[RMDB]
RNA sequence: GGGAACGACUCGAGUAGAGUCGAAAAAAUUUUUUCGGUCUCGUCAGACAUAUCAGUGACAUGAUGGUCAUAGCGAAAGCACACGCACGAAAUGUCACUGAUGAAAAAGUGCGUGUGACCAAUUUAAAUAACGUUGAUUGUUCGCAAUCAACGUUAUAAAAGAAACAACAACAACAAC
Reactivity to 2A3 in 0.01 (KOAc 150mM, MgCl2 10mM, bicine 150mM(pH8.5), 24C), signal-to-noise 1, nucleotides 027 to 126: a000a020u200u080u000u020u000u040c020g060g030u010c010u020c050g060u050c080a040g010a090c020a010u090a010u020c000a010g030u000g010a000c030a040u180g040a140u120g090g040u040c060a180u190a090g020c040g040a050a130a000g000c010a010c000a000c000g000c000a010c060g070a210a030a030u010g030u000c000a000c010u000g000a000u010g000a030a020a000a010a020g000u010g010c000g010u000g020u000g030a000c000c000a000a040u070u110u130a130a180
Reactivity to DMS in 0.01 (KOAc 150mM, MgCl2 10mM, bicine 150mM(pH8.5), 24C), signal-to-noise 2, nucleotides 027 to 126: a040a100u000u000u000u000u000u000c040g020g030u000c030u000c220g000u010c100a120g010a000c060a120u020a050u000c000a040g040u000g000a010c000a040u000g010a120u010g000g010u000c030a080u020a060g000c000g000a110a040a140g010c020a120c070a000c000g000c010a030c050g000a060a050a050u000g020u000c010a000c050u000g010a000u000g010a020a030a080a070a130g010u010g000c000g010u010g000u000g000a020c010c010a060a070u000u000u000a060a080
Conditions: 150 mM KOAc, 10 mM MgCl2 and 150 mM bicine (pH 8.5), 24 C. Chemical mapping of a 177-nucleotide RNA with 2A3 and DMS. Values cover nucleotides 27 to 126. For 2A3 the reverse transcriptase was SuperScript II with manganese. The DMS profile rests on 1,354 reads.